[RMDB]
RNA sequence: GGGAACGACUCGAGUAGAGUCGAAAACUCGCUCUAUAGGCCGCGGUCAGCUCGGGCCCCAGCUCCGGCAGGGGUUCCACUGCUGCCGCGAAGAGUUCGCCUCUGUCAGCCUUGAGGUGGCCGGGAUAGAAUAGGCGGGCUCGCGGCAGCGCGCGGGCCCUCCUAACCAGUUCGCUGGUUAGGAGGGAAAAGAAACAACAACAACAAC
Reactivity to 2A3 in 0.01 (KOAc 150mM, MgCl2 10mM, bicine 150mM(pH8.5), 24C), signal-to-noise 3, nucleotides 027 to 156: c020u020c010g040c010u060c020u110a190u140a230g160g010c000c000g020c020g000g110u180c060a040g030c110u100c070g000g000g000c000c000c000c000a010g000c000u010c060c200g150g010c030a030g030g020g000g010u120u230c010c010a010c040u040g000c000u000g000c000c000g010c000g000a000a020g010a000g000u000u000c000g000c000c000u030c010u010g020u010c000a010g010c000c020u170u190g150a190g130g120u100g040g010c020c020g300g120g000a020u010a010g030a110a130u090a130g000g020c000g010g000g000c000u010c000g010c000g000g000c010a000g000c040g000c000g000c010g010g000g000
The record gives the reactivity of an RNA of 207 nucleotides to 2A3. Reactivities are rounded to 0.1 and cut off at 0 and 3. The reactions ran in a buffer of 150 mM KOAc, 10 mM MgCl2 and 150 mM bicine (pH 8.5), at 24 C. Values cover nucleotides 27 to 156.